The record gives the reactivity of an RNA of 207 nucleotides to 2A3. For 2A3, 427 sequencing reads were counted. Source: RMDB library OK3TST, as collected in RNAgym. The RNA was probed in 150 mM KOAc, 10 mM MgCl2 and 150 mM bicine (pH 8.5) at 24 C.

RNA sequence: GGGAACGACUCGAGUAGAGUCGAAAACUCGCUCAAACAUACAGAGAUGUUGUGCGAGAUGAAUCUCUCUGCAUUAGAAUGGUCGAAGAAUCAGCGGCCAUUCGAGACCAAAUUAGAAGCCGCAUUAACAGCUUUGGAACACGCCUUGCUGACGUGAGACUACUAGCCCUUUCGAGGGCUAGUAGUCAAAAGAAACAACAACAACAAC
Reactivity to 2A3 in 0.01 (KOAc 150mM, MgCl2 10mM, bicine 150mM(pH8.5), 24C), signal-to-noise 1, nucleotides 027 to 156: c000u000c000g040c000u040c080a100a090a040c010a010u150a080c060a150g170a000g000a030u000g010u000u020g000u020g020c010g000a020g000a010u030g090a070a140u020c000u000c000u000c030u130g100c180a100u080u080a060g020a020a000u000g010g000u020c020g030a070a050g080a110a260u030c030a030g120c000g000g000c000c050a000u000u000c000g000a000g010a000c080c030a080a120a100u070u040a070g030a110a000g010c010c040g010c100a030u130u070a060a060c000a010g000c000u030u150u170g090g000a040a040c030a000c040g040c000c000u030u090g000c030u000g000a050c030g060u050g030a030